[RMDB]
RNA sequence: GGGAACGACUCGAGUAGAGUCGAAAAAUAUCGUAAUAUCGAUGCGCAUCGAUCGUACGUAGCGCGCUAGCGCAUUAGCUAAUGCCGUACGUAGCAUAUCGUAGCCGAUUAAUCGUAUAAUGCAUUAGAUCAGGGUACCAUUCGUGGUACCCUGAUCAAAAGAAACAACAACAACAAC
Reactivity to DMS in 0.01 (KOAc 150mM, MgCl2 10mM, bicine 150mM(pH8.5), 24C), signal-to-noise 2, nucleotides 027 to 126: a090u020a100u000c020g000u000a080a070u000a010u000c010g000a070u000g010c180g010c160a190u000c030g010a030u000c150g000u000a000c010g050u000a050g030c040g000c050g060c110u010a050g040c010g040c210a130u020u010a060g010c000u000a010a060u000g000c050c080g000u000a000c000g010u000a140g010c130a100u000a020u000c000g000u000a240g010c150c040g000a010u000u010a170a100u000c000g000u000a020u000a100a120u000g000c130a030u000u000a050
Reactivity to 2A3 in 0.01 (KOAc 150mM, MgCl2 10mM, bicine 150mM(pH8.5), 24C), signal-to-noise 2, nucleotides 027 to 126: a000u090a030u090c020g000u050a020a020u040a050u140c020g020a050u130g010c060g050c100a060u040c040g060a000u040c020g000u020a010c000g000u020a040g150c020g010c030g020c120u050a010g000c040g080c190a180u120u120a040g000c020u020a020a040u070g020c090c000g030u000a010c000g010u020a010g050c050a080u080a000u200c040g040u030a010g080c050c000g000a000u000u100a020a080u090c010g000u070a010u080a110a120u180g070c090a120u100u110a100